This 207-nucleotide RNA was probed chemically with 2A3. Values cover nucleotides 27 to 156.
RNA sequence: GGGAACGACUCGAGUAGAGUCGAAAAUAGUUGAAAGAAAAGAUUUAUGAUUCCUGCAUUAACUAUGCCUCAUCCUAACAAUACAUAUGCUGAGUUUCUGUAUGUAGUCUUUAAAUUUCAUGUCUCAGUGUCAUGUACUCCAUGACAAGAAUCAGUAGUUUUAAUGGUGCUUCGGCACCAUUAAAACAAAAGAAACAACAACAACAAC
Reactivity to 2A3 in 0.01 (KOAc 150mM, MgCl2 10mM, bicine 150mM(pH8.5), 24C), signal-to-noise 1, nucleotides 027 to 156: u040a000g030u050u130g000a000a050a110g090a020a030a050a030g040a120u100u210u250a090u200g110a030u040u070c110c070u070g000c030a030u150u060a080a000c020u030a060u150g070c080c020u050c010a250u080c000c030u070a080a050c030a140a150u090a070c050a030u070a040u110g000c030u010g000a020g030u040u000u070c000u010g000u020a090u080g080u010a030g030u060c000u000u110u120a160a260a120u070u160u100c060a060u050g030u010c050u060c110a060g080u030g040u110c000a010u000g050u020a080c030u000c070c000a010u020g050a000c000a020a000g030a000a020u020c030a000g070u080a000
2A3 adducts were read by reverse transcription with SuperScript II with manganese. The 2A3 profile rests on 345 reads.